[RMDB]
RNA sequence: GGGAACGACUCGAGUAGAGUCGAAAAGAUAUGGACCGUUCCCAGGCAACAGCGUGAGGUCGGAAACGACCUUCACGACAUGCCUGGGUCGACGGUCCUAAGUCAAACGGAUCGUUCGCGAUCCGAAUCCAUUGUCACUCUUCGGAGUGACAAUGGAAAAAGAAACAACAACAACAAC
Reactivity to 2A3 in 0.01 (KOAc 150mM, MgCl2 10mM, bicine 150mM(pH8.5), 24C), signal-to-noise 2, nucleotides 027 to 126: g000a010u040a020u200g000g010a020c000c000g010u070u030c000c000c010a000g050g000c040a100a160c090a260g130c000g010u020g010a000g000g010u020c060g040g010a120a070a000c020g000a000c040c000u040u040c020a000c020g060a040c020a020u100g010c020c010u030g010g000g040u030c100g040a000c000g000g000u030c000c000u000a010a000g000u010c030a070a000a070c030g000g010a010u010c010g010u130u110c300g010c010g180a000u000c000c000g010a010a080
Reactivity to DMS in 0.01 (KOAc 150mM, MgCl2 10mM, bicine 150mM(pH8.5), 24C), signal-to-noise 2, nucleotides 027 to 126: g000a040u000a300u000g000g010a000c000c000g020u000u010c000c000c000a050g000g000c000a020a060c300a150g000c000g020u000g000a050g010g010u000c020g010g010a070a100a260c000g000a000c000c000u030u030c000a000c000g000a010c040a290u000g000c000c000u000g010g000g000u010c200g000a000c000g000g020u000c000c000u000a000a070g000u000c020a090a120a300c020g010g000a010u000c010g020u000u020c190g020c000g030a000u000c000c020g000a030a110